The record gives the reactivity of an RNA of 177 nucleotides to DMS and 2A3. For DMS, 39,426 sequencing reads were counted. For 2A3 the reverse transcriptase was SuperScript II with manganese. Conditions: 150 mM KOAc, 10 mM MgCl2 and 150 mM bicine (pH 8.5), 24 C. Source: RMDB library OK2TRN, as collected in RNAgym.
RNA sequence: GGGAACGACUCGAGUAGAGUCGAAAAGACAUGGUAAUUACAAGCUGGGCAAAUGCCAUAAAAUGCUGUGAGUACAGUGGAAAUAUAAGAUCUAUUCUGGGCUUGCUGCUCUGGUAAAUAGGUUGCCUCUAUACAAUGUAUUCGUACAUUGUAUAGAAAAAGAAACAACAACAACAAC
Reactivity to DMS in 0.01 (KOAc 150mM, MgCl2 10mM, bicine 150mM(pH8.5), 24C), signal-to-noise 9, nucleotides 027 to 126: g000a140c060a030u000g010g020u000a020a040u000u000a040c040a070a090g020c040u000g010g010g010c010a120a070a090u010g010c010c010a090u010a060a070a080a080u010g020c010u000g010u000g000a040g010u000a030c020a060g020u000g000g000a050a080a090u010a100u010a080a100g000a030u000c020u000a040u000u000c020u000g000g000g000c020u000u010g010c180u010g010c020u000c040u000g010g010u000a030a040a040u000a030g010g010u000u000g010c060c040
Reactivity to 2A3 in 0.01 (KOAc 150mM, MgCl2 10mM, bicine 150mM(pH8.5), 24C), signal-to-noise 9, nucleotides 027 to 126: g040a000c020a030u070g020g010u080a080a050u080u070a050c040a130a080g030c030u070g010g010g000c040a190a230a210u270g000c000c010a030u140a090a150a010a030u170g000c010u000g010u020g050a030g030u050a020c010a010g020u020g050g100a040a130a010u240a020u030a080a060g020a030u000c010u020a030u060u050c030u030g000g020g000c020u040u110g070c060u090g010c000u020c020u070g060g040u080a060a070a040u040a030g050g000u020u030g040c000c010